[RMDB]
RNA sequence: GGGAACGACUCGAGUAGAGUCGAAAAUGUAUCCUACAAGUCUAGUACAACGUAUAAACUGACUGUAGGUGACAUCUUCGUACUUACCUCUCACUCUGUGGCUACCUUGACGGCGCCCACAAUUGUGCUCCAAUUAUGUCUUCGGACAUAAUUGGAGAAAAGAAACAACAACAACAAC
Reactivity to DMS in 0.01 (KOAc 150mM, MgCl2 10mM, bicine 150mM(pH8.5), 24C), signal-to-noise 2, nucleotides 027 to 126: u000g020u000a110u000c000c000u000a010c010a030a170g000u010c010u010a040g020u000a050c220a130a120c300g020u020a080u000a080a110a070c070u000g000a030c010u010g010u000a020g000g000u000g010a100c010a030u000c030u000u000c000g010u000a060c030u000u000a070c180c050u000c050u000c070a060c080u010c050u010g020u020g000g000c020u000a060c050c000u000u010g030a090c180g020g000c180g000c170c020c010a020c130a050a060u010u000g000u000g010
Reactivity to 2A3 in 0.01 (KOAc 150mM, MgCl2 10mM, bicine 150mM(pH8.5), 24C), signal-to-noise 3, nucleotides 027 to 126: u010g000u010a020u040c000c000u010a000c030a140a070g000u000c040u290a000g030u050a070c070a200a040c240g200u210a080u120a280a120a030c010u010g010a000c000u000g000u010a000g000g030u030g040a000c000a010u000c020u020u000c010g010u060a050c010u050u050a030c010c000u010c010u010c040a040c020u050c080u130g030u050g020g000c000u030a050c020c000u010u080g040a040c050g030g000c030g010c030c080c000a030c010a050a210u110u100g060u080g080

The record gives the reactivity of an RNA of 177 nucleotides to DMS and 2A3. For DMS the reverse transcriptase was MarathonRT.